[RMDB]
RNA sequence: GGGAACGACUCGAGUAGAGUCGAAAACAGCGUGUGGUGCAGCAGCCGCUCGAAAACGAUCCGCCGAGUGCAGCACCAUUGUGGGCAGGAGCUCGCGAAAUUCCUCCAAGCAGCGGAUAGUUCAGGGGACCGUACUCCUCUUCGGAGGAGUACGGUCAAAAGAAACAACAACAACAAC
Reactivity to 2A3 in 0.01 (KOAc 150mM, MgCl2 10mM, bicine 150mM(pH8.5), 24C), signal-to-noise 1, nucleotides 027 to 126: c090a030g040c090g020u110g020u020g070g000u060g010c000a120g000c000a000g060c010c000g050c040u000c000g030a000a000a050a110c220g020a120u000c000c000g000c000c000g000a000g000u100g050c000a000g010c000a030c050c000a000u060u020g050u000g000g090g010c080a130g050g220a070g020c020u020c040g080c000g000a030a030a030u030u030c000c000u050c030c030a040a000g040c090a000g000c000g030g030a080u040a090g050u060u240c010a020g000g020g020